[RMDB]
RNA sequence: GGGAACGACUCGAGUAGAGUCGAAAACUUAUUAUGCUCACAGCGUGUUGUACAGAGUUUUUCCUUAUGACAUGGAUUCUGGUGUGUCAUCCUUUAGUGAACUACUUUUUGAUUGCGUUGAUCUUUCAAGCUCUUUUGUUCGCAAAAGAGAAAAGAAACAACAACAACAAC
Reactivity to 2A3 in 0.01 (KOAc 150mM, MgCl2 10mM, bicine 150mM(pH8.5), 24C), signal-to-noise 7, nucleotides 027 to 129: c000u070u070a070u160u070a090u240g020c000u040c040a050c020a020g050c040g050u050g040u070u080g010u050a070c120a100g040a050g100u000u010u000u060u080c010c000u060u080a070u080g000a020c010a050u050g060g020a100u150u000c010u040g040g020u040g030u020g040u060c000a040u060c020c010u090u070u080a070g010u050g110a090a040c020u070a050c030u160u140u040u050u140g170a240u110u090g030c040g020u010u010g020a040u000c010u010u050u010c050a060a040g030
Reactivity to DMS in 0.01 (KOAc 150mM, MgCl2 10mM, bicine 150mM(pH8.5), 24C), signal-to-noise 3, nucleotides 027 to 129: c050u000u000a040u050u030a010u000g020c060u020c100a010c120a110g000c000g050u030g040u000u000g000u000a080c000a130g030a100g000u000u000u000u000u000c020c020u030u040a060u050g020a120c030a000u000g000g000a000u020u060c060u040g000g000u040g030u030g000u040c070a070u020c080c040u020u030u000a070g040u030g030a100a030c060u000a000c000u000u000u000u000u000g030a040u020u020g010c070g000u000u000g000a110u000c060u000u000u000c220a000a000g000